[RMDB]
RNA sequence: GGGAACGACUCGAGUAGAGUCGAAAAAGGGACAUCCAGAUGUCAAAGUUACAGCCCCAAGUAGCUGAACCUGGCUUUUAAACUCUAGUUUUCAAGUAUUGGCUAAAUCUUUCUUGCCAAAGUAAAGACCUUAGGGAUUCUUCGGAAUCCCUAAGGUAAAAGAAACAACAACAACAAC
Reactivity to DMS in 0.01 (KOAc 150mM, MgCl2 10mM, bicine 150mM(pH8.5), 24C), signal-to-noise 1, nucleotides 027 to 126: a100g050g010g000a110c090a070u010c060c090a080g000a120u020g010u010c040a120a210a010g000u000u000a070c030a050g010c040c000c000c100a140a050g000u000a050g010c010u010g000a060a180c100c030u000g020g000c140u000u000u000u000a060a000a100c030u000c050u000a070g040u010u010u010u010c030a080a090g030u020a080u010u000g000g020c020u000a030a050a060u020c080u000u010u020c100u010u010g060c080c000a000a030a130g000u010a080a000a100g000
Chemical mapping of a 177-nucleotide RNA with DMS.
The reactions ran in a buffer of 150 mM KOAc, 10 mM MgCl2 and 150 mM bicine (pH 8.5), at 24 C.
For DMS the reverse transcriptase was MarathonRT.
Values cover nucleotides 27 to 126.